[RMDB]
RNA sequence: GGGAACGACUCGAGUAGAGUCGAAAAGAUAUGGAAAGUAGCUAGAGCGGAUAAACAGCGUUGAAACCAGCGUCGGAAACGACGCUGGUGGAGCUGUGUAACGCUCUUGGACCUACUUUCCUAAGUCCUAGACAAAGUAGUUCGCUACUUUGUCUAGAAAAGAAACAACAACAACAAC
Reactivity to 2A3 in 0.01 (KOAc 150mM, MgCl2 10mM, bicine 150mM(pH8.5), 24C), signal-to-noise 2, nucleotides 027 to 126: g050a040u110a060u240g000g000a020a020a010g010u000a010g030c020u010a010g000a000g000c020g000g050a020u040a010a030a000c000a000g020c030g300u300u040g000a020a010a000c010c010a000g000c030g000u010c010g020g040a090a090a070c010g020a010c000g010c000u010g030g000u000g010g000a010g000c010u000g000u010g000u020a020a000c000g000c000u000c000u000u030g000g030a000c000c000u000a010c010u000u010u000c000c000u010a060a010g000u000c010
Reactivity to DMS in 0.01 (KOAc 150mM, MgCl2 10mM, bicine 150mM(pH8.5), 24C), signal-to-noise 6, nucleotides 027 to 126: g000a100u000a300u010g010g000a020a000a010g020u000a010g020c020u000a000g010a010g020c010g010g000a220u000a120a180a010c010a010g020c000g020u000u010g000a180a210a030c000c000a000g000c000g030u000c000g000g010a120a100a250c010g020a030c000g000c000u000g000g000u000g000g000a050g010c000u000g000u000g000u000a080a300c010g000c000u000c000u010u010g020g010a100c300c000u000a000c000u000u000u000c010c000u000a020a080g000u000c030